[RMDB]
RNA sequence: GGGAACGACUCGAGUAGAGUCGAAAACAGAUGCUGGGGAGUACUCCUGUGUGUGUGGGGAGGAGAGGACCUCUGCCACUCUCACCGUGAAGGCCCUGCCAGCCAAGUUCACAGAGGGUCUGAGGAAAAUGCGUGUCUUGUUCGCAAGACACGCAUUAAAAGAAACAACAACAACAAC
Reactivity to 2A3 in 0.01 (KOAc 150mM, MgCl2 10mM, bicine 150mM(pH8.5), 24C), signal-to-noise 1, nucleotides 027 to 126: c050a010g070a100u140g000c040u040g000g090g000g000a100g080u080a160c050u000c000c000u050g040u030g000u020g010u020g030u010g020g020g000g010a040g070g040a130g010a110g110g180a100c000c000u060c030u030g300c040c010a010c000u020c010u010c000a040c020c060g000u050g100a090a030g030g000c000c000c030u070g080c000c000a000g000c000c010a080a010g070u100u090c150a100c030a090g040a040g040g020g010u030c020u030g000a090g000g060a060a100
Reactivity to DMS in 0.01 (KOAc 150mM, MgCl2 10mM, bicine 150mM(pH8.5), 24C), signal-to-noise 1, nucleotides 027 to 126: c070a000g000a090u020g010c030u000g010g010g000g050a120g020u000a110c130u000c010c070u000g060u020g020u000g000u000g000u000g040g040g000g000a030g000g010a170g000a120g040g000a140c010c000u000c010u000g030c010c030a040c010u000c010u000c020a030c000c160g010u000g000a140a080g010g030c020c010c000u000g000c010c040a130g020c030c090a120a220g030u000u010c050a070c130a110g000a030g020g000g000u000c020u000g020a160g000g020a100a050
Description:
Conditions: 150 mM KOAc, 10 mM MgCl2 and 150 mM bicine (pH 8.5), 24 C. Chemical mapping of a 177-nucleotide RNA with 2A3 and DMS. The data come from the RNA Mapping Database (RMDB), library OK2TRN. Values cover nucleotides 27 to 126. 2A3 adducts were read by reverse transcription with SuperScript II with manganese. The 2A3 profile rests on 1,018 reads.